[RMDB]
RNA sequence: GGGAACGACUCGAGUAGAGUCGAAAAGAUAUGGACUGCCAGCGAUAAGCUACACUCGGAAACGAGUGAAUAGCUUUUGACGCUGAUGUCCUAAGUCAAAACCAUCUACAGUUCGCUGUAGAUGGAACUAAUAACGAUGCUUCGGCAUCGUUAUUAGAAAAGAAACAACAACAACAAC
Reactivity to 2A3 in 0.01 (KOAc 150mM, MgCl2 10mM, bicine 150mM(pH8.5), 24C), signal-to-noise 5, nucleotides 027 to 126: g010a000u030a020u050g010g000a000c020u080g160c160c020a000g000c010g100a140u080a300a030g000c010u000a010c000a000c000u010c000g030g000a050a010a010c000g010a010g030u000g010a020a050u050a000g000c000u050u090u100u180g090a030c010g010c000u010g010a010u040g000u000c020c000u010a060a000g020u020c020a020a010a060a190c000c000a000u010c000u010a000c000a010g050u020u120c210g080c160u000g000u000a000g000a000u000g000g000a000a000
Reactivity to DMS in 0.01 (KOAc 150mM, MgCl2 10mM, bicine 150mM(pH8.5), 24C), signal-to-noise 6, nucleotides 027 to 126: g000a020u000a160u010g000g010a020c000u000g030c170c010a000g010c000g010a110u010a020a020g020c000u000a050c020a000c000u000c000g010g000a050a040a080c000g000a010g010u000g000a100a080u000a010g010c000u000u000u000u010g010a260c020g000c000u000g010a060u000g010u000c000c000u000a010a090g000u000c010a080a060a110a200c010c000a000u000c000u000a010c000a010g010u000u020c290g020c010u000g010u000a000g000a000u000g000g010a010a050